[RMDB]
RNA sequence: GGGAACGACUCGAGUAGAGUCGAAAACCGGACGCGGUGGCCUGUCGUGCCGGCAGAAACUGCGGAGCAUGGUGACCGGUACACAAUGAUAAUCUCAUCACAGCAACAGGUCGAUCUUCUGUGUAGAGGUACGGUAGAUGUUCGCAUCUACCGUACCAAAAGAAACAACAACAACAAC
Reactivity to 2A3 in 0.01 (KOAc 150mM, MgCl2 10mM, bicine 150mM(pH8.5), 24C), signal-to-noise 2, nucleotides 027 to 126: c000c000g030g040a000c010g000c030g030g040u030g010g010c000c010u000g030u020c030g000u010g030c040c000g020g010c020a020g110a040a220a040c070u020g000c000g100g030a070g020c010a070u120g030g100u030g040a090c010c040g030g010u060a000c090a000c000a030a120u110g020a030u030a120a130u080c040u040c050a040u000c030a010c000a080g070c010a000a040c000a030g000g050u030c030g080a130u040c040u070u090c020u110g090u020g040u080a050g050a070
Reactivity to DMS in 0.01 (KOAc 150mM, MgCl2 10mM, bicine 150mM(pH8.5), 24C), signal-to-noise 1, nucleotides 027 to 126: c000c000g000g000a120c050g020c020g010g050u000g020g000c030c000u000g000u000c020g050u000g030c020c050g030g000c000a010g000a110a050a080c110u000g000c010g010g020a170g020c050a060u000g020g000u020g000a110c030c030g020g000u010a090c060a070c230a140a020u060g000a020u000a150a070u000c120u020c030a070u000c010a150c030a110g010c230a070a030c070a020g000g070u000c030g000a070u010c010u010u000c020u000g020u000g010u000a080g060a200
This 177-nucleotide RNA was probed chemically with 2A3 and DMS. Values cover nucleotides 27 to 126. Conditions: 150 mM KOAc, 10 mM MgCl2 and 150 mM bicine (pH 8.5), 24 C. For 2A3 the reverse transcriptase was SuperScript II with manganese. DMS adducts were read by reverse transcription with MarathonRT. For 2A3, 1,388 sequencing reads were counted.